[RMDB]
RNA sequence: GGGAACGACUCGAGUAGAGUCGAAAAUCAAGAGUACAACUUCGAUGUAGGAGAACUCGGUGUAAAUAAUACUCGAAACAGUUCUCUUUGAGUAUUAAGCAUCGAGGAUGUAUUGAAGUUGUCAGAAGAUUGUAGGCACAUUCGUGUGUUUACAAUCAAAAGAAACAACAACAACAAC
Reactivity to DMS in 0.01 (KOAc 150mM, MgCl2 10mM, bicine 150mM(pH8.5), 24C), signal-to-noise 7, nucleotides 027 to 126: u030c060a120a080g010a150g020u040a020c000a010a000c000u000u010c000g000a020u000g010u020a070g030g010a210g010a120a170c000u000c000g010g020u020g000u000a100a100a070u000a000a000u000a000c010u000c010g000a010a010a100c300a130g000u020u010c090u010c050u000u000u000g010a020g000u000a000u000u000a020a080g010c000a000u000c000g010a020g000g010a070u010g020u010a030u000u000g000a000a000g000u000u000g010u000c020a120g010a120a080
Reactivity to 2A3 in 0.01 (KOAc 150mM, MgCl2 10mM, bicine 150mM(pH8.5), 24C), signal-to-noise 9, nucleotides 027 to 126: u160c050a070a040g070a050g120u180a010c000a000a000c000u000u000c010g020a010u010g050u110a080g050g300a220g070a150a080c000u000c000g000g010u000g010u020a080a110a010u030a000a000u010a020c000u000c020g040a020a040a040c100a170g140u260u070c110u010c000u050u010u020g000a000g000u000a000u000u010a010a010g010c000a000u000c000g010a000g010g010a010u040g020u030a010u000u010g000a000a000g000u000u000g020u000c010a000g020a060a010